Conditions: 150 mM KOAc, 10 mM MgCl2 and 150 mM bicine (pH 8.5), 24 C. An RNA of 177 nucleotides, treated with DMS and 2A3 and read out base by base. DMS adducts were read by reverse transcription with MarathonRT. It was measured as part of the RMDB libraries RFM100 and RFMREP.
RNA sequence: GGGAACGACUCGAGUAGAGUCGAAAAGGUUGAUUCGGCUGAUCUGGCUGGCUAGGCGGUGUCCCCUUCCUCCCUCACCGCUCCAUGUGCGUCCCUCCCGAAGCUGCGCGCUCGGUCGAAGAGGACGUAAUGUAAGUCCAUUCGUGGACUUACAUUAAAAAGAAACAACAACAACAAC
Reactivity to DMS in 0.01 (KOAc 150mM, MgCl2 10mM, bicine 150mM(pH8.5), 24C), signal-to-noise 9, nucleotides 027 to 126: g000g010u010u000g010a120u010u010c050g010g000c040u010g000a090u010c050u010g010g010c030u000g000g010c190u010a070g000g020c030g010g010u010g000u000c020c010c010c080u010u010c040c020u000c020c010c010u000c040a060c050c030g010c040u000c060c070a070u010g010u010g010c000g000u000c010c000c010u000c020c000c000g010a060a070g020c020u010g010c150g030c110g020c020u000c010g000g000u010c130g000a060a040g010a120g010g000a020c020g010
Reactivity to 2A3 in 0.01 (KOAc 150mM, MgCl2 10mM, bicine 150mM(pH8.5), 24C), signal-to-noise 7, nucleotides 027 to 126: g060g010u070u060g050a130u090u070c030g010g010c010u030g030a160u080c050u090g050g000c010u010g010g010c030u050a060g010g040c010g020g000u030g020u050c000c010c000c010u040u050c000c010u020c000c000c000u020c010a040c000c010g040c010u040c030c010a110u140g060u060g060c010g000u000c000c000c000u000c000c000c000g030a070a030g000c010u060g020c050g010c020g000c090u000c000g020g020u050c070g030a080a020g030a100g040g010a000c020g010